[RMDB]
RNA sequence: GGGAACGACUCGAGUAGAGUCGAAAAGAUAUGGAUCUGAGUAGGGAGGAGUUCGGAAACGAAUACUCCUUUGAUCUACAUGGGAUCCUAAGUCAAACGAUUCUACACCUUCGGGUGUAGAAUCGAAGUCAUUUAAGGACUUCGGUCCUUAAAUGACAAAAGAAACAACAACAACAAC
Reactivity to DMS in 0.01 (KOAc 150mM, MgCl2 10mM, bicine 150mM(pH8.5), 24C), signal-to-noise 2, nucleotides 027 to 126: g020a050u000a300u010g000g000a010u000c000u000g010a140g000u000a000g010g010g000a010g010g020a040g020u010u000c010g020g000a070a090a160c010g000a050a060u020a060c000u000c000c010u010u000u000g000a040u020c000u010a020c000a030u000g000g000g000a010u000c000c010u020a010a130g000u000c000a090a070a270c040g010a000u000u000c000u000a000c000a000c000c000u000u020c240g010g000g000u000g000u000a000g010a000a000u010c000g000a030a070
Reactivity to 2A3 in 0.01 (KOAc 150mM, MgCl2 10mM, bicine 150mM(pH8.5), 24C), signal-to-noise 1, nucleotides 027 to 126: g000a030u080a040u170g000g020a000u000c040u060g030a010g070u000a000g090g000g000a000g020g000a010g010u010u020c000g050g040a110a070a030c010g010a030a030u110a170c000u000c000c020u040u060u000g020a020u000c000u010a010c010a200u300g080g000g000a010u000c000c000u040a170a040g060u030c030a140a040a030c020g000a000u000u020c000u010a000c010a010c000c000u060u050c300g100g000g000u040g000u000a000g010a000a010u000c000g010a010a000